[RMDB]
RNA sequence: GGGAACGACUCGAGUAGAGUCGAAAAGCUCGGAGACGAGCAAGGCUGACAAAACUUUGUCCCAACCUCCACGUGGUGUCGGCUGGAUAAUGCUGCAUUAUGUUGCAUUUAUCAACUGGGAACAAAACAGGUAUAGUGCAUUCGUGCACUAUACCUGAAAAGAAACAACAACAACAAC
Reactivity to DMS in 0.01 (KOAc 150mM, MgCl2 10mM, bicine 150mM(pH8.5), 24C), signal-to-noise 3, nucleotides 027 to 126: g020c040u000c000g030g000a230g000a210c000g000a060g000c010a100a030g000g000c030u050g010a070c010a050a030a090a120c050u010u020u010g000u000c000c000c010a040a130c110c010u000c030c070a150c160g010u010g000g010u010g000u000c000g000g000c020u000g020g000a010u000a020a020u000g020c000u000g000c000a160u050u040a090u100g000u000u000g000c000a000u000u030u010a000u010c000a070a110c110u000g020g020g020a110a030c120a010a020a040a140
Reactivity to 2A3 in 0.01 (KOAc 150mM, MgCl2 10mM, bicine 150mM(pH8.5), 24C), signal-to-noise 9, nucleotides 027 to 126: g000c000u000c010g030g020a110g020a050c020g010a000g010c020a010a070g020g000c010u020g000a010c020a010a130a070a090c080u130u080u140g050u020c000c000c010a000a020c010c010u060c020c050a130c130g080u140g000g010u030g020u020c000g010g000c000u020g000g000a010u010a020a010u000g000c020u020g000c020a080u110u140a150u300g030u030u020g000c000a010u020u050u140a040u050c000a000a040c050u020g020g000g030a030a040c050a030a040a000a010

Description: The record gives the reactivity of an RNA of 177 nucleotides to DMS and 2A3. Values cover nucleotides 27 to 126. The 2A3 profile rests on 9,130 reads. The RNA was probed in 150 mM KOAc, 10 mM MgCl2 and 150 mM bicine (pH 8.5) at 24 C. The DMS profile rests on 4,149 reads.